[RMDB]
RNA sequence: GGGAACGACUCGAGUAGAGUCGAAAAACAUGAAAACAUGAAAGUCCCCGACCAUUGAAGGACCAGCAAUCCACAGGGUCCCCGAGUCAUGCGUUGUAUACCGUGAGGUAUGGGGCGAAGCGUUGACAGGGGUGUUGACAGGCCAGCCAUUGAGCCACGAAAUGUAUAUUAAAUUCCCGGGUGCCGACGUUGUACUGUUUACGGAAGGCAACAUCAUAGGGUGCGUUACUGCGAGUGCCAUAUGGACCCGGCGGGGUCUGAGACCCACCAUUACGUUCGCGUGAUGGAAAAGAAACAACAACAACAAC
Reactivity to DMS in 0.01 (KOAc 150mM, MgCl2 10mM, bicine 150mM(pH8.5), 24C), signal-to-noise 3, nucleotides 027 to 266: a170c000a010u010g020a220a140a140a230c050a010u000g000a080a110a190g040u010c010c000c000c140g010a060c090c050a100u000u010g000a080a090g000g010a030c010c030a030g000c050a080a250u010c030c040a070c150a080g010g000g000u000c000c000c050c040g010a130g010u000c010a040u000g010c030g000u000u000g000u000a020u000a010c010c000g000u020g000a130g000g010u000a010u000g010g010g000g000c020g000a040a130g000c120g000u010u010g010a060c050a280g000g000g000g040u010g000u020u000g000a190c090a080g000g010c040c040a090g010c080c040a120u000u010g010a130g010c030c020a060c070g020a070a080a040u010g010u000a040u020a070u000u010a040a090a190u010u010c090c000c010g000g010g030u000g020c030c020g000a130c100g010u010u010g010u000a070c110u010g000u000u000u000a080c060g010g000a100a120g000g000c030a030a170c110a050u010c020a040u020a040g000g010g010u000g020c010g000u000u010a050c110u020g020c040g010a060g020u000g000c010c020a040u010a060u010g000g020a080c010c040c040g000g020c130g000g000g000g000u000c010u010g000a120g000a050c030c000c010a170
Reactivity to 2A3 in 0.01 (KOAc 150mM, MgCl2 10mM, bicine 150mM(pH8.5), 24C), signal-to-noise 1, nucleotides 027 to 266: a050c010a000u070g090a000a160a030a140c030a030u050g100a300a020a020g090u030c010c000c000c000g030a080c070c000a040u090u150g070a180a040g050g010a010c000c000a040g030c040a010a060u110c050c030a070c040a090g040g050g030u060c000c010c010c000g070a030g030u050c000a010u060g010c010g020u030u010g300u170a000u010a020c030c010g030u070g070a110g010g000u020a030u030g000g010g000g050c010g050a100a080g090c010g050u030u060g020a010c010a040g010g070g000g020u050g040u080u070g060a030c030a030g020g000c000c000a000g000c010c010a040u050u110g050a040g050c020c030a060c020g040a000a070a050u160g050u030a060u010a040u140u250a060a140a070u210u070c100c000c000g010g000g020u050g040c010c000g010a010c040g020u020u020g010u130a070c060u060g020u060u180u100a030c040g040g030a090a000g030g020c010a010a030c000a060u190c050a060u090a050g050g000g000u000g060c010g050u080u230a170c070u230g010c030g030a020g000u020g020c010c020a010u060a040u080g010g010a020c020c000c060g000g000c030g060g010g000g010u000c000u030g080a100g000a020c010c020c000a010